[RMDB]
RNA sequence: GGGAACGACUCGAGUAGAGUCGAAAAGGGGUCGAAUUCUCAGUACGAAUUUGUCAGCUCUACCUGAAGCCUCCACGGGAGAGCUUGGAUUUAAUUCGGAACCGAAUUCGACGGAGGCACCCAAACUCUCAAUAGAGCUUCGGCUCUAUUGAGAGAACAGUGCAAUUCUGUUCGCAGAAUUGCACUGAAAAGAAACAACAACAACAAC
Reactivity to 2A3 in 0.01 (KOAc 150mM, MgCl2 10mM, bicine 150mM(pH8.5), 24C), signal-to-noise 1, nucleotides 027 to 156: g040g000g000g010u000c000g000a000a000u000u010c020u010c000a010g000u010a000c020g000a000a000u000u050u080g000u020c000a010g000c010u110c010u140a300c020c010u050g090a150a040g080c060c000u020c070c040a010c020g000g000g010a000g030a020g000c010u040u040g040g020a020u090u060u300a060a040u000u030c000g030g000a000a000c020c000g000a000a000u010u000c000g000a000c010g000g010a010g010g050c020a020c000c000c000a020a090a130c010u000c000u000c000a000a000u000a000g010a020g000c020u080u130c300g130g000c000u020c010u010a000u000u000g010a010g000a010g010a000a000
Record summary: This 207-nucleotide RNA was probed chemically with 2A3. For 2A3 the reverse transcriptase was SuperScript II with manganese. The RNA was probed in 150 mM KOAc, 10 mM MgCl2 and 150 mM bicine (pH 8.5) at 24 C.